RNA sequence: GGGAACGACUCGAGUAGAGUCGAAAAAUAUCGCCUCCUGUCCUAUAUGAUGCACCAUAUGGACGAAGUGGUUUCGCGCACCGAGCUUGUGGAACAUCUUUACGAUCAGGAUUUCGACCGCGAUUCACCGAAAAUUAAUGUUCGCAUUAAUUUUCGGAAAAGAAACAACAACAACAAC
Reactivity to DMS in 0.01 (KOAc 150mM, MgCl2 10mM, bicine 150mM(pH8.5), 24C), signal-to-noise 5, nucleotides 027 to 126: a120u000a060u000c040g020c050c100u000c020c020u010g010u000c010c020u020a020u000a020u000g010a080u000g000c240a150c090c010a020u000a030u010g000g000a080c020g000a100a090g010u010g010g020u010u000u010c090g020c070g010c060a060c050c030g000a160g010c020u010u010g020u000g000g000a070a100c080a040u010c030u000u000u000a080c150g000a030u010c030a030g010g000a070u000u010u010c090g010a090c240c090g010c030g000a040u000u010c130a180
Reactivity to 2A3 in 0.01 (KOAc 150mM, MgCl2 10mM, bicine 150mM(pH8.5), 24C), signal-to-noise 4, nucleotides 027 to 126: a000u110a020u030c040g010c020c000u030c020c010u040g020u030c000c020u040a040u000a020u170g060a040u090g060c060a050c040c010a040u030a060u090g030g030a060c010g000a080a020g040u050g060g040u030u060u090c120g030c010g000c050a030c030c010g020a010g030c000u050u050g020u030g030g040a040a030c010a060u030c000u050u110u080a050c060g020a050u090c010a020g050g000a050u070u050u050c050g040a030c020c040g000c020g040a040u060u060c060a050
Overview
Structure probing data (DMS and 2A3) for a 177-nucleotide construct. For DMS the reverse transcriptase was MarathonRT. Values cover nucleotides 27 to 126.